[RMDB]
RNA sequence: GGGAACGACUCGAGUAGAGUCGAAAAGAACAGGAUAACAGGACGCAAGAUAGGAAGUUCGGAUGAAUUGAGAAGAGCCGUAACUCGAGAACAACGGCAGCGUCCUGAAGAAUUUACGGCUCAAGAAGACGCCUAGUAGUUUCGACUACUAGGCGUCAAAAGAAACAACAACAACAAC
Reactivity to DMS in 0.01 (KOAc 150mM, MgCl2 10mM, bicine 150mM(pH8.5), 24C), signal-to-noise 2, nucleotides 027 to 126: g040a120a090c030a050g000g000a140u150a130a080c000a020g020g000a000c000g040c040a120a120g000a160u080a080g000g010a020a300g000u050u000c000g000g030a120u020g050a090a200u070u050g000a100g030a180a160g000a000g050c000c000g000u000a000a090c050u000c060g000a090g000a060a140c060a020a300c140g020g060c140a000g040c050g000u000c000c000u070g000a000a130g000a110a130u010u000u040a010c040g020g000c000u000c020a010a050g000a110a050
Reactivity to 2A3 in 0.01 (KOAc 150mM, MgCl2 10mM, bicine 150mM(pH8.5), 24C), signal-to-noise 1, nucleotides 027 to 126: g090a000a000c110a060g040g060a110u100a210a010c010a000g000g000a000c000g010c000a000a000g110a220u120a110g080g040a000a180g040u050u070c000g000g000a020u070g060a040a240u250u000g000a030g030a160a050g010a010g000c000c000g060u060a000a000c000u000c000g020a000g060a070a020c010a120a000c010g160g080c000a000g000c000g000u000c060c000u040g030a000a000g000a000a000u180u140u160a000c000g030g010c040u000c000a020a020g000a040a000
The record gives the reactivity of an RNA of 177 nucleotides to DMS and 2A3. In probing experiments dimethyl sulfate is read out at A N1 and C N3, which are open when not base-paired. For 2A3, 925 sequencing reads were counted. It was measured as part of the RMDB library OK1LIB. Values cover nucleotides 27 to 126. DMS adducts were read by reverse transcription with MarathonRT. The RNA was probed in 150 mM KOAc, 10 mM MgCl2 and 150 mM bicine (pH 8.5) at 24 C.